Description:
The record gives the reactivity of an RNA of 177 nucleotides to 2A3 and DMS. 2A3 adducts were read by reverse transcription with SuperScript II with manganese. Reactivities are given for positions 27 through 126. Conditions: 150 mM KOAc, 10 mM MgCl2 and 150 mM bicine (pH 8.5), 24 C.

RNA sequence: GGGAACGACUCGAGUAGAGUCGAAAAGACGCCUGUGUGGCGAAGCGAGCAAUGGCAUAAGCCGCAAUAGAAGAUGAGAUGGAAGCGGCAAGAUAGAAUGCUCGCAACCAGAUCCAUCUCACAGAGAGCUAUAAUGCGGGUUCGCCCGCAUUAUAGCAAAAGAAACAACAACAACAAC
Reactivity to 2A3 in 0.01 (KOAc 150mM, MgCl2 10mM, bicine 150mM(pH8.5), 24C), signal-to-noise 2, nucleotides 027 to 126: g060a000c050g050c000c000u210g100u120g030u100g120g000c000g050a050a000g000c000g000a000g000c000a130a060u260g150g040c050a050u040a220a020g000c000c000g010c000a030a180u110a080g180a160a010g070a200u040g000a000g000a000u020g000g030a300a000g000c000g000g000c000a020a010g040a040u220a060g130a180a030u070g000c000u000c010g000c000a000a000c000c000a000g010a110u000c010c010a000u000c000u000c020a000c020a040g190a000g030a000
Reactivity to DMS in 0.01 (KOAc 150mM, MgCl2 10mM, bicine 150mM(pH8.5), 24C), signal-to-noise 1, nucleotides 027 to 126: g030a090c050g020c000c010u000g010u100g010u120g000g080c000g000a190a130g030c000g040a030g000c060a040a030u070g020g000c030a180u000a090a120g040c020c000g000c010a120a040u000a200g020a110a190g000a070u000g060a000g000a040u000g000g070a090a190g000c000g030g010c000a000a050g000a140u030a120g020a030a040u010g000c000u010c000g000c000a070a000c030c050a270g000a200u000c000c020a000u000c000u050c000a000c090a070g000a040g000a160